This 170-nucleotide RNA was probed chemically with 2A3 and DMS. The data come from the RNA Mapping Database (RMDB), library 15KLIB. Reactivities are given for positions 27 through 129. High DMS reactivity at an A or C suggests that its Watson-Crick edge is free. Conditions: 150 mM KOAc, 10 mM MgCl2 and 150 mM bicine (pH 8.5), 24 C.

[RMDB]
RNA sequence: GGGAACGACUCGAGUAGAGUCGAAAAAUGCAUCCGUAGACCAUUUCUCUGCUGUAAAUGCUGCUAUGAUCAUGUUAUAGCAACUCCACAUAAGAUGGUUUUGUCUGUUUCUCCUUACGUUUGUAAUUAAGUAUCGCCUUCGGGCGAUACAAAAGAAACAACAACAACAAC
Reactivity to 2A3 in 0.01 (KOAc 150mM, MgCl2 10mM, bicine 150mM(pH8.5), 24C), signal-to-noise 2, nucleotides 027 to 129: a000u020g000c000a000u000c000c000g000u000a000g000a000c000c000a030u000u200u180c080u000c000u020g240c000u000g060u240a070a070a060u180g000c120u000g010c000u050a000u070g120a100u120c100a090u300g090u190u000a000u000a060g000c000a000a000c000u140c170c000a080c000a010u050a010a000g170a270u000g000g000u000u180u000u000g080u000c200u090g000u040u000u000c060u010c040c040u030u120a000c010g150u190u080u010g050u050a000a000u030u000a000a000
Reactivity to DMS in 0.01 (KOAc 150mM, MgCl2 10mM, bicine 150mM(pH8.5), 24C), signal-to-noise 3, nucleotides 027 to 129: a070u040g020c080a000u040c010c050g100u020a070g080a100c050c020a120u000u020u000c020u000c040u020g030c120u020g040u070a020a040a060u020g010c000u030g000c020u020a070u030g010a090u030c130a150u120g020u000u000a040u000a030g030c030a060a020c060u010c150c300a090c070a060u090a060a210g000a050u010g000g040u000u000u010u090g020u040c080u050g020u130u000u000c010u010c190c090u040u080a000c110g010u040u050u070g070u080a010a110u010u070a050a180